An RNA of 177 nucleotides, treated with DMS and 2A3 and read out base by base. The RNA was probed in 150 mM KOAc, 10 mM MgCl2 and 150 mM bicine (pH 8.5) at 24 C. 2A3 adducts were read by reverse transcription with SuperScript II with manganese. It was measured as part of the RMDB library TTRDES.
RNA sequence: GGGAACGACUCGAGUAGAGUCGAAAAUAAGAUAUGGAGGAUACUACCCACCGUCGGAUGGACGUUGAAAUAAAGUCGGAAACGACUUUAUGGAGUCCUGAUGACGAGGUAUCCUCCUAAGUCGGAACAAAUAGUGUAUGUUCGCAUACACUAUUUGAAAAGAAACAACAACAACAAC
Reactivity to DMS in 0.01 (KOAc 150mM, MgCl2 10mM, bicine 150mM(pH8.5), 24C), signal-to-noise 9, nucleotides 027 to 126: u010a170a170g010a050u000a200u010g000g010a020g010g020a020u000a010c010u000a100c040c040c110a300c050c000g000u000c010g000g000a090u000g000g010a010c000g000u000u020g000a090a130a000u010a000a000a010g010u000c000g010g000a060a050a170c010g010a020c000u000u000u000a000u000g010g000a040g020u000c000c000u000g000a300u010g000a010c000g000a030g000g000u000a010u000c010c000u000c000c000u000a000a070g000u000c030g000g010a180a200
Reactivity to 2A3 in 0.01 (KOAc 150mM, MgCl2 10mM, bicine 150mM(pH8.5), 24C), signal-to-noise 4, nucleotides 027 to 126: u300a060a070g030a050u080a040u150g000g000a010g010g000a000u010a020c000u070a090c030c090c060a040c030c000g010u010c000g030g020a020u020g010g000a000c010g190u300u030g000a000a000a000u010a000a000a000g000u000c010g010g000a010a020a000c000g000a000c000u000u000u000a000u000g000g000a010g000u010c000c010u000g010a020u050g000a000c000g000a000g000g000u000a000u000c000c000u000c000c000u000a000a000g010u000c020g040g060a070a030